[RMDB]
RNA sequence: GGGAACGACUCGAGUAGAGUCGAAAAUAGAACCACAGGGCUAGUACCACGAUCCAUACGAUGGGGAACAGGCCGAAUGCUGCACCUUGGGUGGCAGAUAGUAGGGCGAAAUUCCAGGGCAUGUGGAGUAAAUGGUUGGUUUCGACCAACCAUUUACAAAAGAAACAACAACAACAAC
Reactivity to DMS in 0.01 (KOAc 150mM, MgCl2 10mM, bicine 150mM(pH8.5), 24C), signal-to-noise 3, nucleotides 027 to 126: u000a120g010a180a170c000c000a040c050a050g010g000g020c030u010a100g010u000a140c010c010a060c070g010a130u010c040c040a100u010a110c060g000a090u000g000g000g000g010a040a050c100a200g000g000c010c000g020a090a090u010g010c020u000g010c020a050c000c040u000u010g030g030g050u010g020g010c030a010g000a030u000a090g030u010a120g010g010g020c030g000a010a110a230u000u000c010c040a110g010g010g000c060a060u000g020u000g000g000a140